RNA sequence: GGGAACGACUCGAGUAGAGUCGAAAAAUGCCGCAUUCAGUGACGGUCACUCUAGUGGGCAACUGUCCAUCUAGCGUUGACAUCUACAUACUAUAUAGUAAUACCAAUACUCAAGACUACGAAACGGCAUGCGUACCAUCUUCGGAUGGUACGCAUGAAAAGAAACAACAACAACAAC
Reactivity to DMS in 0.01 (KOAc 150mM, MgCl2 10mM, bicine 150mM(pH8.5), 24C), signal-to-noise 2, nucleotides 027 to 126: a100u000g000c000c000g010c270a110u000u020c060a210g000u060g000a150c080g000g000u000c050a000c020u000c000u000a000g050u000g000g030g050c000a190a150c200u070g020u000c050c080a040u070c000u000a000g000c250g000u000u040g040a000c000a150u000c140u020a140c110a090u050a120c100u020a060u000a090u000a020g000u000a030a110u030a210c230c090a090a000u000a060c060u020c090a000a110g000a030c040u000a140c110g000a020a040a300c000g000g000
Reactivity to 2A3 in 0.01 (KOAc 150mM, MgCl2 10mM, bicine 150mM(pH8.5), 24C), signal-to-noise 4, nucleotides 027 to 126: a040u140g020c030c000g090c040a080u050u070c060a020g040u010g080a040c050g050g000u000c000a000c000u010c000u010a010g000u050g000g000g000c040a300a280c240u300g030u000c000c010a060u110c010u000a000g020c000g060u020u210g000a000c000a020u000c040u040a030c000a130u130a040c070u020a030u050a040u080a250g060u090a110a010u060a170c000c060a050a020u050a070c010u060c070a020a110g050a090c070u080a050c090g030a030a060a020c020g030g000